[RMDB]
RNA sequence: GGGAACGACUCGAGUAGAGUCGAAAAUGAGGGGCAUUUUUGCCUUUGAGAAGUCCUCCCAGGUAUCCUGGUAUAGCACAAUGUGGCAAUCCGUAGUGGGAAUGAAGAUUAAACAGGAGAGACUUUGUAUUAGACCUGUGAGACGAGUUAGGAAGCCCCUCCCUGAUCUUUUCGAAGAUCAGGGAGGAAAAGAAACAACAACAACAAC
Reactivity to 2A3 in 0.01 (KOAc 150mM, MgCl2 10mM, bicine 150mM(pH8.5), 24C), signal-to-noise 1, nucleotides 027 to 156: u100g000a070g010g000g000g000c020a010u000u140u000u030u300g010c020c120u000u000u070g040a030g000a090a000g060u020c000c000u000c010c010c010a000g060g040u170a080u160c000c000u030g000g000u040a040u190a240g000c000a020c000a060a130u190g130u140g090g010c050a080a050u000c040c030g040u110a080g000u050g070g040g030a000a060u060g040a070a050g020a110u240u140a030a050a100c020a050g060g000a030g000a010g000a020c070u090u020u090g020u030a160u050u010a050g000a060c000c000u010g050u080g030a060g000a000c020g000a000g060u060u070a020g040g030a100a000g000c000c010